[RMDB]
RNA sequence: GGGAACGACUCGAGUAGAGUCGAAAAGUCGACCCCGCGAGCGAGGGCGUCGAGGGCCUCGCGCAUCUGGCGAUCCUCCGCCUCCACCCUAAUCUCUUCGCCACGGGCAAAUUUGGCCAGAGCCUGGUAAGCGUGCAAGGUUCGCCUUGCACGCUUAAAAAGAAACAACAACAACAAC
Reactivity to 2A3 in 0.01 (KOAc 150mM, MgCl2 10mM, bicine 150mM(pH8.5), 24C), signal-to-noise 1, nucleotides 027 to 126: g090u030c020g050a110c000c000c000c040g020c000g010a040g000c020g020a060g070g000g000c030g050u090c010g030a070g000g020g000c000c010u040c040g000c000g000c000a160u100c050u090g050g000c030g020a030u080c000c000u000c000c030g000c000c000u040c000c010a040c040c020c000u030a060a130u080c020u040c000u150u100c050g090c030c000a070c010g040g020g000c090a030a080a020u180u090u050g030g000c050c010a020g010a030g090c000c040u030g000g050

Structure probing data (2A3) for a 177-nucleotide construct.
The reactions ran in a buffer of 150 mM KOAc, 10 mM MgCl2 and 150 mM bicine (pH 8.5), at 24 C.